[RMDB]
RNA sequence: GGGAACGACUCGAGUAGAGUCGAAAAUGUGUUACCACUGUCGUAUCAAUGCGUGCCACAGUAAUGAUUCGUGAAUAAUAACCCGCUUGAUUCUUCUUCUCAGCCACAACAUCUUCCACUGCCUGGGUGAUUCGUAGAAGUUCGCUUCUACGAAUCAAAAAGAAACAACAACAACAAC
Reactivity to 2A3 in 0.01 (KOAc 150mM, MgCl2 10mM, bicine 150mM(pH8.5), 24C), signal-to-noise 2, nucleotides 027 to 126: u140g020u000g030u020u070a030c010c000a000c060u060g020u120c060g040u070a020u100c090a090a120u180g050c030g100u050g000c020c000a030c010a000g040u100a050a130u100g090a070u000u120c040g010u080g120a020a040u130a090a030u020a060a090c000c010c030g010c040u020u050g050a080u100u020c030u080u020c010u060u000c020u020c040a020g010c000c040a020c010a100a080c020a050u020c000u070u010c020c000a070c060u010g030c010c020u030g010g020g070
Reactivity to DMS in 0.01 (KOAc 150mM, MgCl2 10mM, bicine 150mM(pH8.5), 24C), signal-to-noise 4, nucleotides 027 to 126: u000g010u010g010u000u000a080c070c050a090c050u010g010u000c160g010u000a060u000c070a090a090u010g020c110g030u000g000c050c040a020c050a060g000u000a080a110u000g000a070u000u010c050g020u000g010a050a080u010a060a070u000a120a090c050c030c030g020c080u000u010g010a120u010u000c020u000u000c060u000u010c020u000c040a120g010c030c020a050c070a050a050c060a060u000c060u000u000c040c030a070c060u000g010c060c010u000g010g010g020
The record gives the reactivity of an RNA of 177 nucleotides to 2A3 and DMS. The 2A3 profile rests on 2,573 reads. The RNA was probed in 150 mM KOAc, 10 mM MgCl2 and 150 mM bicine (pH 8.5) at 24 C. DMS (dimethyl sulfate) methylates the pairing face of unpaired adenines and cytosines.